Structure probing data (2A3 and DMS) for a 207-nucleotide construct. Source: RMDB library OK3TST, as collected in RNAgym. For DMS, 2,289 sequencing reads were counted. Values cover nucleotides 27 to 156. As a SHAPE reagent, 2A3 marks flexible, mostly unpaired nucleotides at the ribose 2'-OH. The RNA was probed in 150 mM KOAc, 10 mM MgCl2 and 150 mM bicine (pH 8.5) at 24 C. For DMS the reverse transcriptase was MarathonRT.
RNA sequence: GGGAACGACUCGAGUAGAGUCGAAAAUAUCAACUUUAUUAUCAAGUCAUCUUAUGUUUUUAAGAGAUAUCUAGCUAUAUACGGAUUUGGUGUAACGUUCAAAGAUCUGAGGCCAAAUUCGACGUUCACUAAUAAAUUGGAGGCCAUCAACGUAGAAGGUAUGAGUUUAGUUCGCUAAACUCAUACCAAAAGAAACAACAACAACAAC
Reactivity to 2A3 in 0.01 (KOAc 150mM, MgCl2 10mM, bicine 150mM(pH8.5), 24C), signal-to-noise 3, nucleotides 027 to 156: u080a010u050c000a040a100c010u030u080u110a090u090u050a040u190c030a070a030g060u020c020a010u000c080u030u080a110u110g150u110u170u080u030u080a100a030g030a000g000a000u090a050u100c060u050a040g040c030u030a030u050a040u010a240c020g020g010a000u000u010u060g000g010u030g040u030a020a040c070g050u050u010c110a100a050a090g040a050u000c030u150g040a050g060g030c000c000a000a020a030u000u030c010g010a020c050g030u000u040c030a000c040u020a050a080u070a120a030a060u050u070g030g030a010g040g010c020c010a020u060c010a000a060c040g050u070a020g040a250a010
Reactivity to DMS in 0.01 (KOAc 150mM, MgCl2 10mM, bicine 150mM(pH8.5), 24C), signal-to-noise 1, nucleotides 027 to 156: u000a230u010c030a000a090c000u000u000u000a000u030u000a130u000c030a050a090g020u000c030a160u010c010u000u020a060u000g010u000u000u010u010u010a040a100g000a080g000a090u000a040u010c040u010a060g020c040u000a090u010a110u000a070c000g020g000a050u000u000u010g020g000u000g010u000a090a080c060g010u000u000c010a130a070a220g060a070u000c090u020g010a190g020g000c020c010a030a040a080u000u010c020g000a020c030g010u010u010c030a080c040u010a040a090u000a050a050a130u010u010g000g020a100g040g030c000c020a140u000c030a080a040c090g000u000a120g000a130a210